An RNA of 177 nucleotides, treated with 2A3 and DMS and read out base by base. The DMS profile rests on 4,604 reads.
RNA sequence: GGGAACGACUCGAGUAGAGUCGAAAAUAGUCGGAAUUCGUUCCGACUAGAUGAACGCUGCAAGCGGCAGCGCGCUCAAAAGAGCACGCAAAUGCAACGCAAAAAUGAACUUAUUCGUAAGUUCAAAGCAAACUAACAUAUUCGUAUGUUAGUUUGCAAAAGAAACAACAACAACAAC
Reactivity to 2A3 in 0.01 (KOAc 150mM, MgCl2 10mM, bicine 150mM(pH8.5), 24C), signal-to-noise 5, nucleotides 027 to 126: u010a000g000u000c000g000g030a000a010u080u020c170g040u090u000c000c000g000a000c000u000a000g000a000u110g060a090a020c050g000c120u060g000c060a090a190g050c030g060g000c030a020g000c000g000c020g000c010u010c020a250a300a100a130g010a010g000c010a010c030g000c010a060a080a040u100g000c020a020a060c050g000c010a030a080a020a010a070u070g000a000a000c010u020u020a020u070u090c200g070u050a010a010g000u010u000c020a040a010a010
Reactivity to DMS in 0.01 (KOAc 150mM, MgCl2 10mM, bicine 150mM(pH8.5), 24C), signal-to-noise 5, nucleotides 027 to 126: u000a010g010u000c000g020g000a010a050u000u010c260g020u000u000c000c000g030a020c000u000a000g000a140u000g010a130a100c090g010c080u010g000c030a090a200g010c140g010g030c300a140g000c000g010c020g000c000u000c000a060a060a100a120g000a010g020c000a010c000g010c010a040a060a190u010g010c000a030a060c120g000c050a010a030a040a070a100u000g000a010a020c000u000u000a020u010u010c200g000u000a000a010g000u000u000c000a070a060a130
The data come from the RNA Mapping Database (RMDB), library M2PK50. Conditions: 150 mM KOAc, 10 mM MgCl2 and 150 mM bicine (pH 8.5), 24 C.